Source: RMDB library M2RFPK, as collected in RNAgym. This 207-nucleotide RNA was probed chemically with DMS and 2A3. The 2A3 profile rests on 1,435 reads. The RNA was probed in 150 mM KOAc, 10 mM MgCl2 and 150 mM bicine (pH 8.5) at 24 C. For DMS, 1,773 sequencing reads were counted. DMS adducts were read by reverse transcription with MarathonRT.
[RMDB]
RNA sequence: GGGAACGACUCGAGUAGAGUCGAAAAAGAUCCACGCUACGGCGUGGAUCACACGUUCAUCGCUAUUGGGACGGAAGUAGGCAUAGUGCCGAAGGAACGCAUUAGUCAUGCGCUACGGCGCAUGACACACAUCAGAGUCACUUCGGUGACUCUGAAAGAAUAGGGAGAUCUUCGGAUCUCCCUAUUCAAAAGAAACAACAACAACAAC
Reactivity to DMS in 0.01 (KOAc 150mM, MgCl2 10mM, bicine 150mM(pH8.5), 24C), signal-to-noise 1, nucleotides 027 to 156: a070g000a020u000c000c030a010c000g020c010u000a090c240g040g000c050g000u000g010g030a000u020c030a040c030a060c060g020u000u000c000a160u000c150g020c070u000a100u010u010g010g010g000a120c000g010g020a070a070g030u000a100g010g000c030a160u010a160g020u010g000c040c000g010a130a130g050g010a070a020c050g040c020a100u030u000a170g010u000c020a010u010g000c000g030c010u000a080c240g110g000c000g020c000a040u000g000a010c010a070c050a040c020a210u010c000a010g000a010g010u000c010a010c010u000u020c270g090g030u000g010a010c010u000c010u000g000a000a020a100
Reactivity to 2A3 in 0.01 (KOAc 150mM, MgCl2 10mM, bicine 150mM(pH8.5), 24C), signal-to-noise 3, nucleotides 027 to 156: a000g000a000u000c000c000a000c000g050c000u050a030c300g160g000c010g020u000g000g000a000u000c000a010c000a010c000g010u010u010c010a110u060c120g060c150u190a190u290u300g040g000g010a030c010g020g010a060a010g050u050a010g030g000c030a090u150a230g120u210g120c000c000g020a010a020g040g050a030a000c090g000c100a120u070u160a050g000u000c000a000u010g040c000g000c040u010a030c280g090g000c000g020c000a000u010g010a000c000a000c000a000c000a020u070c000a000g000a000g020u000c000a010c010u020u090c200g080g000u000g000a000c000u000c000u000g000a000a000a000